[RMDB]
RNA sequence: GGGAACGACUCGAGUAGAGUCGAAAAGAAACUCGUUUCGCGUUGGCUGCCUAAUUCAAGGAAUUAGCGUGCCUUCAUGCUAAGGAUUUGAUAUCUGCUAAAACCCGGUGCAUUCAUCAAUGCAGGUCUCAUCCAAAUGCCUUCGGGCAUUUGGAAACUCUGUUCUUCCUUUCGAGGAAGAACAGAGAAAAGAAACAACAACAACAAC
Reactivity to 2A3 in 0.01 (KOAc 150mM, MgCl2 10mM, bicine 150mM(pH8.5), 24C), signal-to-noise 2, nucleotides 027 to 156: g030a040a080a010c090u050c040g030u030u010u050c110g000c010g020u000u070g020g000c000u060g030c040c000u020a050a030u030u010c070a140a070g130g030a030a020u000u020a030g010c080g040u060g000c020c070u070u160c060a080u130g040c030u080a030a070g040g000a050u030u030u030g040a030u030a050u060c030u060g000c020u060a030a020a090a120c020c030c010g050g060u040g000c050a060u020u170c040a070u100c050a060a090u070g000c010a010g020g030u020c040u010c040a030u000c000c000a000a000a010u010g000c000c000u020u040c140g110g000g000c000a000u000u000u000g010g000a000a000a000
The record gives the reactivity of an RNA of 207 nucleotides to 2A3. Conditions: 150 mM KOAc, 10 mM MgCl2 and 150 mM bicine (pH 8.5), 24 C. It was measured as part of the RMDB library M2RFPK.